[RMDB]
RNA sequence: GGGAACGACUCGAGUAGAGUCGAAAACGCAGAGAAUGCUCGCCUGAUUGAUUGCCGCAAGCAGUUGGUUGCAGAAGGGAUCGCAGCGAUUCAGUGCGGCGCUUUCCAUAAUACGACUGGCGGACUGGGACCGUGAGGCUUUCGAGCCUCACGGUCCAAAAGAAACAACAACAACAAC
Reactivity to 2A3 in 0.01 (KOAc 150mM, MgCl2 10mM, bicine 150mM(pH8.5), 24C), signal-to-noise 1, nucleotides 027 to 126: c040g000c000a010g000a010g090a300a130u120g020c040u000c070g000c000c000u050g020a060u010u010g140a000u000u230g150c000c000g110c020a000a140g080c000a000g090u040u170g190g000u040u000g000c000a000g090a100a270g240g080g030a070u100c040g000c000a000g100c150g040a000u180u140c040a090g050u000g090c050g000g000c000g000c000u060u180u000c000c000a140u020a090a010u060a060c110g000a000c020u000g000g000c100g000g000a000c070u040g050
About this RNA:
Chemical mapping of a 177-nucleotide RNA with 2A3. Reactivities are given for positions 27 through 126. The 2A3 profile rests on 362 reads. The RNA was probed in 150 mM KOAc, 10 mM MgCl2 and 150 mM bicine (pH 8.5) at 24 C.